[RMDB]
RNA sequence: GGGAACGACUCGAGUAGAGUCGAAAACAGAAUCGCUGGGUUCUUCUAAGCGACCAGGAGCGAAGAACGUACUGAAGCGCGCACGGUACGGGAGCUCCCAGUCGCUUUCUAGAACCUGUGCUGAAGCGCGCACGGCAACCGAAAGGUGCGAGACCAACAGGUAUCGUUACUUCGGUAACGAUACCUGAAAAGAAACAACAACAACAAC
Reactivity to 2A3 in 0.01 (KOAc 150mM, MgCl2 10mM, bicine 150mM(pH8.5), 24C), signal-to-noise 1, nucleotides 027 to 156: c060a020g130a120a080u020c000g010c030u040g010g000g000u000u010c010u020u010c020u010a020a000g020c000g010a000c020c000a040g040g010a000g000c030g090a220a090g070a240a050c010g000u000a000c010u040g080a280a060g000c000g000c000g000c010a040c010g020g000u000a000c000g010g040g110a020g000c000u000c010c000c000a000g000u000c000g020c030u000u010u030c010u000a000g000a000a000c020c010u010g000u010g000c000u020g020a120a050g000c000g000c000g000c010a010c010g000g000c000a010a010c000c010g030a060a010a040g000g000u000g020c000g020a030g030a050c040c020a040a100